[RMDB]
RNA sequence: GGGAACGACUCGAGUAGAGUCGAAAAGGAUGAUCUGGCCCCGGCCAGUGAUCCGAAUUAGUACCGGGAUUGCAUCGUCGAGCCGUCAGGGGCGAAGACGAGAACCUGAAAGCACGAAGCACUGGGCGGUGCGGGUGCGAGAUAUAACGCCCAACAAACGCUAUCAUACUUUCGAGUAUGAUAGCGUAAAAGAAACAACAACAACAAC
Reactivity to 2A3 in 0.01 (KOAc 150mM, MgCl2 10mM, bicine 150mM(pH8.5), 24C), signal-to-noise 3, nucleotides 027 to 156: g000g020a060u080g010a060u040c010u010g020g000c010c010c020c060g080g010c000c000a010g020u030g030a030u000c000c010g000a020a060u180u090a080g080u050a060c010c030g000g000g020a050u040u180g080c080a130u030c000g010u010c010g010a010g030c020c000g120u250c210a100g220g040g020g000c020g030a050a010g010a000c010g000a000g000a010a000c000c010u060g050a150a050a000g010c000a000c030g070a070a010g010c000a000c040u060g020g020g000c010g010g000u010g010c000g030g070g000u010g020c070g030a030g060a010u190a010u020a060a050c060g010c010c000c000a010a010c040a010a110
Reactivity to DMS in 0.01 (KOAc 150mM, MgCl2 10mM, bicine 150mM(pH8.5), 24C), signal-to-noise 3, nucleotides 027 to 156: g030g010a090u000g020a150u000c000u000g000g010c000c010c260c270g050g010c000c000a030g060u000g010a080u000c000c000g000a110a060u010u010a200g000u010a100c030c020g000g020g000a120u000u000g020c070a220u000c030g020u000c010g010a300g020c000c040g020u020c130a240g000g000g000g020c000g030a090a250g000a050c030g020a050g030a050a160c020c020u000g000a080a130a170g030c000a040c010g000a240a130g030c020a030c050u020g020g030g040c040g030g020u000g000c040g020g030g010u000g020c030g000a130g030a170u010a130u000a180a090c000g000c000c020c000a030a090c100a210a220
This 207-nucleotide RNA was probed chemically with 2A3 and DMS.
2A3 adducts were read by reverse transcription with SuperScript II with manganese.
For 2A3, 2,687 sequencing reads were counted.
For DMS the reverse transcriptase was MarathonRT.
The reactions ran in a buffer of 150 mM KOAc, 10 mM MgCl2 and 150 mM bicine (pH 8.5), at 24 C.